Record summary: An RNA of 177 nucleotides, treated with DMS and 2A3 and read out base by base. For DMS the reverse transcriptase was MarathonRT. Reactivities are given for positions 27 through 126.

[RMDB]
RNA sequence: GGGAACGACUCGAGUAGAGUCGAAAACUCGAAAGAGACCUGCAUAUCUUAGGCAGAUGAUCAAGUCCCGUCUGAAAAGCGAAAGCCCUAAGAUAUGCAGCUGUGAGGACUUGGCGCAGAAAAUAAACACUACGAUGACUUUCGAGUCAUCGUAGUGAAAAGAAACAACAACAACAAC
Reactivity to DMS in 0.01 (KOAc 150mM, MgCl2 10mM, bicine 150mM(pH8.5), 24C), signal-to-noise 2, nucleotides 027 to 126: c010u080c000g000a090a050a110g000a030g000a110c200c000u000g080c000a000u000a010u010c000u000u000a000g000g010c020a040g020a000u000g000a070u040c020a000a020g000u010c030c210c000g040u000c000u000g020a130a050a100a120g040c000g000a180a130a060g030c010c000c020u010a000a010g010a000u000a030u000g000c000a010g010c060u020g030u000g000a080g010g000a020c030u000u000g010g000c040g030c010a060g020a110a070a060a110u060a080a090a110
Reactivity to 2A3 in 0.01 (KOAc 150mM, MgCl2 10mM, bicine 150mM(pH8.5), 24C), signal-to-noise 5, nucleotides 027 to 126: c000u000c000g010a000a030a000g070a010g060a060c010c000u000g000c000a000u000a000u010c000u000u000a000g000g000c010a000g000a020u010g000a020u070c000a000a000g010u000c000c040c020g010u000c000u010g130a280a220a080a010g030c030g070a080a010a010g000c000c000c000u000a000a000g000a010u000a000u000g000c000a010g000c010u020g010u010g020a020g020g000a000c000u020u020g060g000c020g000c020a030g130a080a110a010a010u260a080a070a010
Source: RMDB library OK1LIB, as collected in RNAgym. Conditions: 150 mM KOAc, 10 mM MgCl2 and 150 mM bicine (pH 8.5), 24 C.